[RMDB]
RNA sequence: GGGAACGACUCGAGUAGAGUCGAAAAGAUAUGGAGGCUUGUAGGGAGUCCUUAUUCGGAAACGAAUAAUGGACGAAGAACUACACUGGCCUCCUAAGUCAAAGACCUUCUACUUCGGUAGAAGGUCCGAUAUCAAUUCGUUCGCGAAUUGAUAUCGAAAAGAAACAACAACAACAAC
Reactivity to 2A3 in 0.01 (KOAc 150mM, MgCl2 10mM, bicine 150mM(pH8.5), 24C), signal-to-noise 4, nucleotides 027 to 126: g000a000u010a010u050g000g000a000g010g010c100u240u230g060u040a020g000g050g060a100g020u010c010c000u000u000a000u000u000c000g010g000a010a010a000c010g000a010a000u030a030a070u300g000g000a000c000g000a100a020g010a000a000c000u020a010c020a030c090u080g120g010c000c000u000c000c000u000a000a000g000u000c010a070a090a070g010a000c000c000u000u000c000u000a010c010u020u100c300g150g000u010a000g000a000a010g020g000u000c000
Reactivity to DMS in 0.01 (KOAc 150mM, MgCl2 10mM, bicine 150mM(pH8.5), 24C), signal-to-noise 6, nucleotides 027 to 126: g000a010u000a040u010g000g000a030g010g010c000u000u000g020u000a020g010g010g010a060g010u000c000c000u000u000a010u000u000c000g020g000a010a010a030c000g010a020a010u000a000a020u010g040g010a010c000g010a070a120g000a140a280c000u000a020c000a090c300u010g020g000c000c000u000c000c000u000a000a070g000u000c010a120a100a150g010a010c000c000u000u000c000u000a010c000u010u000c230g030g000u000a000g000a020a010g010g000u000c000